[RMDB]
RNA sequence: GGGAACGACUCGAGUAGAGUCGAAAAAGUUUAGGAUGGAUGUCAGAGGAGAAAGGACACAAAUGCCACCGCCAACUGAGGCGGCAGUGCAGCGUGUAUACAGGGCAAUGACAGGAGACAUUGAUAACUCCAUUGGCCAGAACCUUGGAAACGACAACGACCAUAUGAUAUUCGUAUCAUAUGGUCGAAAAGAAACAACAACAACAAC
Reactivity to DMS in 0.01 (KOAc 150mM, MgCl2 10mM, bicine 150mM(pH8.5), 24C), signal-to-noise 2, nucleotides 027 to 156: a060g020u000u020u000a090g000g010a090u010g040g000a140u010g020u020c070a040g000a170g000g030a070g020a080a030a110g000g030a050c020a070c100a050a050a120u000g040c010c080a050c000c000g010c000c040a070a160c300u010g010a160g000g040c030g020g030c000a030g010u000g060c020a060g010c140g000u000g030u000a110u000a120c030a090g050g010g000c000a060a150u020g030a040c030a140g000g010a080g010a060c090a150u000u000g010a140u000a070a110c040u000c000c020a100u000u010g020g020c000c020a100g000a040a110c010c020u000u010g000g000a090a050a070c040g000a130c050a100a190
Reactivity to 2A3 in 0.01 (KOAc 150mM, MgCl2 10mM, bicine 150mM(pH8.5), 24C), signal-to-noise 4, nucleotides 027 to 156: a000g090u080u050u060a070g040g020a060u050g020g030a040u040g020u130c090a030g020a040g060g010a020g020a080a060a000g090g000a030c010a010c010a030a290a040u060g020c000c020a020c000c000g000c020c000a130a130c210u200g040a110g070g000c000g010g020c040a050g000u150g120c020a010g010c020g030u030g000u010a030u020a040c110a070g000g040g000c020a030a040u040g040a030c030a040g000g030a010g020a020c060a070u020u160g070a100u160a120a050c030u000c050c020a040u020u070g040g000c010c000a010g010a040a070c020c000u070u060g030g020a040a080a020c010g100a020c040a030a030
This 207-nucleotide RNA was probed chemically with DMS and 2A3.
Conditions: 150 mM KOAc, 10 mM MgCl2 and 150 mM bicine (pH 8.5), 24 C.